[RMDB]
RNA sequence: GGGAACGACUCGAGUAGAGUCGAAAAGAUAUGGAAUCAGUAGGGAGCUCUGCGUAGGAUAGUGUCGGAAACGACACCUGAGCGAAGAACUACAGAUUCCUAAGUCAAAGGUCGGUUCGCCGACCAAGAACCUUAGGUUCUUCGGAACCUAAGGUUCAAAAGAAACAACAACAACAAC
Reactivity to 2A3 in 0.01 (KOAc 150mM, MgCl2 10mM, bicine 150mM(pH8.5), 24C), signal-to-noise 1, nucleotides 027 to 126: g010a000u020a000u060g000g000a000a010u000c010a020g000u000a000g000g010g000a070g000c010u010c020u060g120c150g300u220a180g200g180a160u180a130g010u010g010u020c010g000g000a000a000a000c000g000a000c000a010c000c000u010g010a000g020c010g040a300a000g020a000a010c000u010a020c040a010g020a000u000u000c000c000u010a010a000g000u040c050a140a110a050g000g000u020c010g060g020u010u110c300g000c110c010g000a010c010c000a010a060
Reactivity to DMS in 0.01 (KOAc 150mM, MgCl2 10mM, bicine 150mM(pH8.5), 24C), signal-to-noise 1, nucleotides 027 to 126: g000a000u000a050u000g000g000a030a010u000c000a100g030u000a020g000g000g000a060g020c010u010c000u020g020c200g000u000a120g090g030a110u000a220g010u010g000u000c020g010g010a010a030a010c000g010a020c000a000c000c020u000g010a000g030c010g020a030a120g010a220a240c010u000a010c000a110g020a060u000u030c000c000u000a000a070g000u000c010a100a110a150g010g010u000c000g020g030u000u000c300g030c000c000g010a020c000c010a020a060